[RMDB]
Description
The data come from the RNA Mapping Database (RMDB), library VIROID. Chemical mapping of a 207-nucleotide RNA with 2A3. Reactivities are given for positions 27 through 156. 2A3 adducts were read by reverse transcription with SuperScript II with manganese.
RNA sequence: GGGAACGACUCGAGUAGAGUCGAAAAGGCAGAAGCUCAAAUAGACAAAAAGCAGGUUGGAAGACGAACCGAGAGGUGAUCCCACCGGUCGCGUCUCACUCCAAGACCCAGGAAAAGGUAAAAAAAAAGGGACAACCAUGGGGUUUCAAACCAAAAAGAAUAAUUGUAAGUUCGCUUACAAUUAUUCAAAAGAAACAACAACAACAAC
Reactivity to 2A3 in 0.01 (KOAc 150mM, MgCl2 10mM, bicine 150mM(pH8.5), 24C), signal-to-noise 1, nucleotides 027 to 156: g000g010c010a000g010a060a000g000c020u010c020a070a060a040u070a060g090a060c020a000a130a020a020a000g040c060a140g050g060u130u180g030g060a080a010g020a020c020g010a020a010c010c000g020a030g020a060g140g030u080g030a060u080c010c020c000a010c000c080g010g010u010c080g010c020g060u000c000u050c020a090c020u020c000c000a040a020g040a070c000c000c030a000g100g000a090a070a050a030g090g010u140a090a090a000a000a020a000a030a090a050g050g000g000a050c030a050a000c010c060a030u100g010g010g030g010u030u060u090c070a060a030a010c100c030a000a140a030a000a080